[RMDB]
RNA sequence: GGGAACGACUCGAGUAGAGUCGAAAAUCAGGAAGCUUGAUGGUGUACUUGAGGCUAGAAGUAAGCGUUUAUCACAGUUGGAAGAACGAGUGAAACUUUUAGGCGCUGGGUCAACUUCAUCUAUUCAGACUAAAUAUACGUUCGCGUAUAUUUAGUCAAAAGAAACAACAACAACAAC
Reactivity to 2A3 in 0.01 (KOAc 150mM, MgCl2 10mM, bicine 150mM(pH8.5), 24C), signal-to-noise 6, nucleotides 027 to 126: u070c020a010g050g060a070a010g050c080u080u070g020a020u050g020g050u050g020u070a040c020u030u060g080a020g060g030c010u020a030g010a070a010g030u070a080a030g020c020g040u050u070u040a130u060c040a020c020a140g080u110u100g130g080a140a070g030a080a010c020g020a040g060u050g030a120a040a030c020u050u070u040u050a050g040g020c030g020c090u030g020g000g030u030c020a020a020c020u080u060c020a050u030c020u090a190u070u080c020a020
Reactivity to DMS in 0.01 (KOAc 150mM, MgCl2 10mM, bicine 150mM(pH8.5), 24C), signal-to-noise 9, nucleotides 027 to 126: u010c060a120g010g010a080a090g010c090u000u000g010a050u000g010g010u000g020u000a050c030u000u000g010a090g020g020c030u010a050g010a040a050g010u000a070a100g010c040g000u000u000u000a100u010c040a080c070a150g010u000u000g010g020a070a300g010a040a030c040g010a070g010u000g000a100a090a080c090u000u000u010u000a070g000g000c030g010c050u010g010g010g010u010c060a040a050c040u010u000c030a040u010c050u010a120u010u010c110a140
Source: RMDB library OK2TST, as collected in RNAgym. Chemical mapping of a 177-nucleotide RNA with 2A3 and DMS. For 2A3 the reverse transcriptase was SuperScript II with manganese.